RNA sequence: GGGAACGACUCGAGUAGAGUCGAAAACGGCUUCGACGUCCUAGUGAAAGUUGGGCUGUGAUGCAGGUCGAGAGUGGACUAUCUCUCGUUAAUCCAGAGUCCAAGCCAAAAGUAACUGCGAACAACAUCGUUCCUUUCGCUCGUAAAGCUGCUGCGGCAUCGUAACUUUGUUCGCAAAGUUACGAUGAAAAGAAACAACAACAACAAC
Reactivity to DMS in 0.01 (KOAc 150mM, MgCl2 10mM, bicine 150mM(pH8.5), 24C), signal-to-noise 4, nucleotides 027 to 156: c050g030g000c030u000u000c020g020a070c030g000u000c020c020u000a090g010u010g020a110a060a110g020u000u000g010g020g010c000u000g030u000g020a090u010g020c040a100g030g010u000c030g010a070g020a040g010u000g000g010a130c070u010a090u010c000u000c020u000c010g010u000u010a040a100u000c040c020a080g000a130g010u000c010c020a090a120g020c060c060a050a090a090a140g020u000a040a050c040u000g000c010g020a050a060c130a080a100c100a090u000c050g010u000u000c000c010u000u000u000c040g010c030u000c050g020u000a070a100a100g020c010u000g020c010u000g010c050g000g020
Reactivity to 2A3 in 0.01 (KOAc 150mM, MgCl2 10mM, bicine 150mM(pH8.5), 24C), signal-to-noise 9, nucleotides 027 to 156: c020g030g000c020u080u070c060g050a030c020g060u050c010c040u080a060g040u050g150a130a090a060g030u070u030g020g010g000c030u030g070u070g050a040u100g030c060a020g030g070u090c000g000a000g000a000g010u030g010g060a040c030u050a040u120c000u000c000u000c020g060u030u030a010a010u000c000c010a000g000a000g050u000c010c000a020a020g040c020c030a060a090a020a020g040u050a060a060c050u050g020c020g020a030a010c020a030a030c020a170u080c040g010u000u010c010c000u010u060u040c050g000c020u050c040g100u100a050a060a060g030c040u050g010c020u050g020c030g030g000